[RMDB]
RNA sequence: GGGAACGACUCGAGUAGAGUCGAAAAUUUAGAGGAUAAACGACAAAAGUUUUUAACUUUAACACCUAAAGGGCAUGAAUUAUAUGAGAUUGUUUGUCUUGAUGUACAAAAGCUCCAACAAGCAGUAAUUAGAGGUACAGUUCGCUGUACCUCUAAUAAAAGAAACAACAACAACAAC
Reactivity to DMS in 0.01 (KOAc 150mM, MgCl2 10mM, bicine 150mM(pH8.5), 24C), signal-to-noise 2, nucleotides 027 to 126: u000u000u000a040g000a050g020g050a120u000a050a040a060c070g020a150c190a090a080a120a230g000u000u000u010u000u030a050a210c020u000u000u000a050a060c210a090c000c010u020a050a050a050g000g010g010c050a030u000g000a090a030u000u000a050u020a080u000g010a060g010a040u010u000g010u000u010u020g010u010c020u000u000g000a060u000g000u010a070c100a050a090a050a020g010c050u000c080c090a010a020c090a100a040g000c080a040g020u000a060